[RMDB]
RNA sequence: GGGAACGACUCGAGUAGAGUCGAAAAGCGGUUGCACGGUCUUGGUGGCGCAACGCGUUCGGCCACCGGAGUUGGCGGGUCGUUGGGAACUUCCCGGCGGUAAGGUCGCCGCCGGCGAAACCGAGCGCAUAGCGUGACGCUUCGGCGUCACGCUAUGAAAAGAAACAACAACAACAAC
Reactivity to DMS in 0.01 (KOAc 150mM, MgCl2 10mM, bicine 150mM(pH8.5), 24C), signal-to-noise 1, nucleotides 027 to 126: g040c060g010g010u000u000g020c020a130c100g030g020u000c040u020u000g070g030u000g010g000c020g000c140a080a040c160g030c040g030u000u000c030g030g030c040c040a050c030c020g020g010a070g010u010u000g010g020c020g010g010g020u000c020g000u000u000g000g000g020a050a130c160u010u010c000c020c000g010g010c010g050g010u060a080a110g010g020u010c100g020c000c000g010c020c000g020g020c090g010a040a040a150c010c000g010a020g000c070g020

Structure probing data (DMS) for a 177-nucleotide construct. Values cover nucleotides 27 to 126. The data come from the RNA Mapping Database (RMDB), library OK2TST. In probing experiments dimethyl sulfate is read out at A N1 and C N3, which are open when not base-paired.